[RMDB]
RNA sequence: GGGAACGACUCGAGUAGAGUCGAAAAGCUGUUGAGAUUCGUCUCAACAGCAAAAAGAUAUGGAACUACGUAGGUGAGGCGUGCUGUCGGAAACGACAGGCACGCUCCUACAUAGUAGUUCCUAAGUCAAAAAGUAAGGACGUUCGCGUCCUUACAACUUGUAGAUCAGGUUCGCCUGAUCUACAAGAAAAGAAACAACAACAACAAC
Reactivity to DMS in 0.01 (KOAc 150mM, MgCl2 10mM, bicine 150mM(pH8.5), 24C), signal-to-noise 2, nucleotides 027 to 156: g000c000u000g030u000u000g000a020g000a050u030u000c300g030u000c000u010c030a000a010c000a030g020c020a000a050a050a100a120g010a110u010a260u000g010g010a010a010c000u000a010c000g020u000a080g000g040u000g000a140g030g020c000g040u000g000c020u020g060u000c000g040g010a170a100a200c010g020a000c000a020g040g000c030a000c000g020c000u000c010c000u000a020c010a130u000a260g000u000a030g020u000u000c000c000u000a000a090g050u010c060a060a070a110a070a150g000u010a010a010g010g010a010c000g030u000u000c300g050c050g040u000c000c000u000u000a000c010a070a090
Reactivity to 2A3 in 0.01 (KOAc 150mM, MgCl2 10mM, bicine 150mM(pH8.5), 24C), signal-to-noise 4, nucleotides 027 to 156: g000c000u000g000u000u010g000a010g000a010u060u150c230g100u010c050u000c000a000a000c000a000g000c000a000a020a000a000a000g010a020u050a020u040g000g000a000a000c010u010a000c020g020u020a000g030g060u200g300a110g130g000c010g000u010g000c000u000g000u010c020g020g020a040a060a070c010g000a010c000a010g050g000c000a010c000g000c000u040c000c000u010a000c010a020u040a030g010u000a000g010u000u000c000c000u010a020a020g030u010c040a060a040a060a070a040g010u010a000a000g010g020a010c030g010u030u090c290g040c020g110u020c000c010u000u000a000c000a000a000

Chemical mapping of a 207-nucleotide RNA with DMS and 2A3. For DMS, 4,362 sequencing reads were counted. Conditions: 150 mM KOAc, 10 mM MgCl2 and 150 mM bicine (pH 8.5), 24 C. For 2A3 the reverse transcriptase was SuperScript II with manganese. Values cover nucleotides 27 to 156.